The record gives the reactivity of an RNA of 207 nucleotides to DMS and 2A3. It was measured as part of the RMDB library OK3TST. For 2A3, 2,011 sequencing reads were counted. For DMS, 2,414 sequencing reads were counted. For DMS the reverse transcriptase was MarathonRT. The RNA was probed in 150 mM KOAc, 10 mM MgCl2 and 150 mM bicine (pH 8.5) at 24 C.
[RMDB]
RNA sequence: GGGAACGACUCGAGUAGAGUCGAAAAGAUGUUGUGUGAUCAGUCACAAGAAUAGCAGGAUCACAUUCCAACAGGAGUUAAGAUUGUUGAUCUCAUCUUCUAUAGUAAGUCCUAAAGGCACUUUACAUCAGAAUAACGUGACUGUGCCAAUUAGUCGUCCAUUGAUACGGUUCGCCGUAUCAAUGGAAAAAGAAACAACAACAACAAC
Reactivity to DMS in 0.01 (KOAc 150mM, MgCl2 10mM, bicine 150mM(pH8.5), 24C), signal-to-noise 2, nucleotides 027 to 156: g010a140u020g000u010u010g020u000g010u000g000a080u000c020a140g040u000c060a170c090a110a130g020a090a080u020a090g050c210a120g020g010a040u010c020a030c070a050u000u000c020c000a050a150c090a070g000g030a100g000u020u000a260a050g000a070u000u000g050u010u000g010a050u000c010u000c020a080u000c040u020u000c000u000a050u000a070g010u000a050a060g000u010c000c030u000a060a040a130g020g010c100a000c020u000u000u000a020c030a060u000c090a140g010a120a150u000a120a010c080g020u000g010a010c000u000g040u020g020c010c000a000a170u000u020a070g020u000c040g010
Reactivity to 2A3 in 0.01 (KOAc 150mM, MgCl2 10mM, bicine 150mM(pH8.5), 24C), signal-to-noise 4, nucleotides 027 to 156: g090a060u100g000u070u030g010u010g010u030g060a030u060c000a010g080u040c010a030c020a090a050g050a190a070u160a070g100c090a040g030g020a020u010c000a010c010a030u040u000c030c000a070a020c040a120g230g030a100g050u060u130a050a020g030a070u000u040g070u070u090g030a050u000c040u030c050a090u000c020u060u000c000u010a020u040a090g060u030a100a010g020u000c050c000u110a140a000a120g020g000c060a000c000u020u040u120a060c030a060u060c040a000g140a270a120u110a120a010c080g000u000g010a000c000u000g020u010g010c020c000a020a100u050u040a030g040u060c050g040